[RMDB]
RNA sequence: GGGAACGACUCGAGUAGAGUCGAAAAGAGCUGCCACGCUCCAGGCCGGCAGGAUGCCGGGGUGGGAUGCUGCACACAGGCUGAGGUGCCCCGGUGCAGCCAGCUGUACCUUUCCUGUCUGCGGCGCGAUUUUCCCUCUAUUCGUAGAGGGAAAAUCAAAAGAAACAACAACAACAAC
Reactivity to 2A3 in 0.01 (KOAc 150mM, MgCl2 10mM, bicine 150mM(pH8.5), 24C), signal-to-noise 2, nucleotides 027 to 126: g030a010g000c050u070g090c010c030a060c080g030c010u010c030c000a060g040g030c000c030g020g000c020a020g110g130a080u140g000c030c000g000g000g000g030u040g000g040g020a060u140g000c020u030g000c030a020c010a010c020a070g050g000c040u110g070a060g050g220u070g010c000c010c010c090g000g000u030g020c030a020g010c020c010a000g000c030u030g020u090a040c000c000u040u070u000c000c000u020g040u030c010u040g010c020g040g000c020g030c020
Reactivity to DMS in 0.01 (KOAc 150mM, MgCl2 10mM, bicine 150mM(pH8.5), 24C), signal-to-noise 4, nucleotides 027 to 126: g000a040g010c020u000g010c050c070a100c090g020c060u000c020c040a080g020g020c040c040g000g000c030a100g010g000a120u000g000c050c020g000g000g010g020u000g010g010g020a130u010g010c010u010g000c030a040c090a090c100a150g010g010c090u020g010a160g030g000u010g010c010c110c050c100g010g010u000g000c060a060g010c020c050a050g010c050u000g010u010a070c040c020u000u020u000c010c000u000g000u000c080u000g000c030g010g000c050g030c200